An RNA of 177 nucleotides, treated with DMS and read out base by base. The reactions ran in a buffer of 150 mM KOAc, 10 mM MgCl2 and 150 mM bicine (pH 8.5), at 24 C.
RNA sequence: GGGAACGACUCGAGUAGAGUCGAAAAGAUAUGGACCGUCCGUUGCUCAACAGCAAUAAAGCCCUAUCUUAGUCGGAAACGACUAAGAUAGGGCUUUAUUGACAUGAGCGACGGCGGUCCUAAGUCACUUUGUAUGUCAGUUCGCUGACAUACAAAGAAAAGAAACAACAACAACAAC
Reactivity to DMS in 0.01 (KOAc 150mM, MgCl2 10mM, bicine 150mM(pH8.5), 24C), signal-to-noise 1, nucleotides 027 to 126: g010a050u000a300u010g000g020a020c000c000g020u000c010c000g010u000u010g000c000u010c010a050a130c300a270g000c000a000a000u000a000a000a030g000c000c000c020u030a010u000c000u000u020a000g020u000c000g000g000a090a110a250c000g000a030c000u000a000a000g010a020u000a000g000g010g010c000u000u000u000a010u000u000g000a030c100a290u000g020a010g010c000g000a020c010g010g010c000g000g020u000c000c000u000a000a040g010u000c060a160